[RMDB]
RNA sequence: GGGAACGACUCGAGUAGAGUCGAAAAUUGUAUGAUGAGGAACCAGAUAGGGACAACAGAUUCUCAAGUGACGAGGAACAUCUUUUAAAGCCCAGUUUUUAGUAGAGCUUAGGGCGCCUUUACUGACGACAGGUAAUGCGUUCGCGCAUUACCUGUCAAAAGAAACAACAACAACAAC
Reactivity to 2A3 in 0.01 (KOAc 150mM, MgCl2 10mM, bicine 150mM(pH8.5), 24C), signal-to-noise 2, nucleotides 027 to 126: u120u150g210u190a140u060g020a030u040g070a030g300g010a040a040c080c000a000g070a090u130a050g150g000g160a000c010a190a000c030a070g040a140u030u020c000u000c000a000a110g030u040g090a100c130g040a100g000g000a020a000c000a060u050c030u000u100u000u050a010a150a000g000c000c000c000a000g000u020u040u000u140u160a040g000u130a000g000a000g000c030u050u140a030g020g010g000c010g050c000c000u300u100u180a160c050u000g020a000c010
Reactivity to DMS in 0.01 (KOAc 150mM, MgCl2 10mM, bicine 150mM(pH8.5), 24C), signal-to-noise 1, nucleotides 027 to 126: u000u000g010u000a060u000g090a020u020g000a250g020g000a230a030c180c070a110g000a070u000a110g000g000g000a020c110a030a120c140a240g000a090u000u110c060u020c060a060a190g000u010g010a060c140g000a170g000g000a080a080c260a000u070c000u000u000u000u060a080a240a150g000c000c080c000a160g000u000u000u030u000u030a050g140u060a010g000a020g000c000u000u050a160g000g000g000c000g010c000c110u020u000u070a030c100u050g000a240c230